[RMDB]
RNA sequence: GGGAACGACUCGAGUAGAGUCGAAAAGUGGUACGGUAUGGCGAGGCUUGCCUCGGAGCCAAGCGGGAGGGCUUCCGGGGCGCCGCACGAGCGCAGUGUUGCGCGAGACUCUAGGCCCGUGACAUGUUACGGACAAAUUCCGUGACCGUGUUAAGGCGGAUACAAUACUGUUCGCAGUAUUGUAUCCAAAAGAAACAACAACAACAAC
Reactivity to 2A3 in 0.01 (KOAc 150mM, MgCl2 10mM, bicine 150mM(pH8.5), 24C), signal-to-noise 9, nucleotides 027 to 156: g110u090g000g040u060a030c050g030g020u090a080u130g080g010c050g030a060g040g020c070u080u180g000c010c000u000c000g000g000a000g000c010c010a060a040g060c050g020g030g000a030g020g010g000c000u300u100c010c000g000g000g000g000c000g000c000c000g000c010a040c050g070a070g010c030g000c040a060g040u100g110u300u110g030c020g000c020g000a030g020a030c050u050c070u120a080g040g080c010c000c020g050u140g010a000c010a020u050g000u000u010a000c000g000g010a020c110a130a240a130u240u000c000c000g000u000g000a020c050c070g010u010g010u030u040a040a040g040g010c000
Reactivity to DMS in 0.01 (KOAc 150mM, MgCl2 10mM, bicine 150mM(pH8.5), 24C), signal-to-noise 2, nucleotides 027 to 156: g010u030g010g030u000a040c050g020g000u000a060u000g000g040c080g020a110g040g030c040u000u000g040c000c000u030c020g020g010a070g000c010c020a110a140g040c050g020g010g030a210g040g000g000c000u000u000c030c020g000g000g040g020c000g010c010c020g030c020a060c090g010a170g010c020g000c000a140g000u000g010u000u010g020c020g010c050g010a180g010a120c040u000c050u000a230g030g030c020c000c010g020u010g010a020c020a070u010g040u000u000a020c010g000g020a080c050a100a100a240u000u010c000c020g020u000g000a010c000c130g030u010g010u010u000a300a130g000g030c120

This 207-nucleotide RNA was probed chemically with 2A3 and DMS. The RNA was probed in 150 mM KOAc, 10 mM MgCl2 and 150 mM bicine (pH 8.5) at 24 C. 2A3 adducts were read by reverse transcription with SuperScript II with manganese.